Structure probing data (DMS and 2A3) for a 177-nucleotide construct. 2A3 adducts were read by reverse transcription with SuperScript II with manganese.
RNA sequence: GGGAACGACUCGAGUAGAGUCGAAAAUCAUUGGCUUCGCUGCGCGCUGCGUUGCCUAGGCUUCAGAUGCUUCGUACUGUUGCCAACGUUGCAAUUUCCAAACGCUAAUGCGUAAGUGUGCAAACAACUGAAUGAUCGGGUUCGCCCGAUCAUUCAGAAAAGAAACAACAACAACAAC
Reactivity to DMS in 0.01 (KOAc 150mM, MgCl2 10mM, bicine 150mM(pH8.5), 24C), signal-to-noise 2, nucleotides 027 to 126: u000c050a110u000u000g000g000c010u000u000c070g000c070u010g000c020g020c050g020c070u000g000c040g040u000u000g010c010c000u000a140g030g000c000u000u000c010a040g020a130u030g020c070u000u010c130g010u050a120c070u000g010u000u000g070c010c000a120a110c200g010u000u000g000c100a090a180u000u000u000c020c000a050a140a040c020g060c020u000a070a100u030g010c010g030u020a030a120g040u000g000u010g010c010a130a060a070c200a090a080
Reactivity to 2A3 in 0.01 (KOAc 150mM, MgCl2 10mM, bicine 150mM(pH8.5), 24C), signal-to-noise 2, nucleotides 027 to 126: u100c020a020u030u080g020g000c010u020u020c020g010c040u090g000c000g000c000g000c030u010g000c000g020u000u000g020c010c000u030a060g000g000c000u000u010c020a030g030a130u090g070c030u130u160c080g090u080a060c030u040g030u040u010g000c030c020a040a050c080g040u030u110g030c040a070a100u020u040u050c020c000a080a020a000c010g010c030u170a300a060u200g000c010g010u030a010a040g010u000g020u000g000c000a010a040a090c040a060a090

Annotation
The RNA was probed in 150 mM KOAc, 10 mM MgCl2 and 150 mM bicine (pH 8.5) at 24 C. Reactivities are rounded to 0.1 and cut off at 0 and 3. Source: RMDB library M2PK90, as collected in RNAgym. DMS adducts were read by reverse transcription with MarathonRT.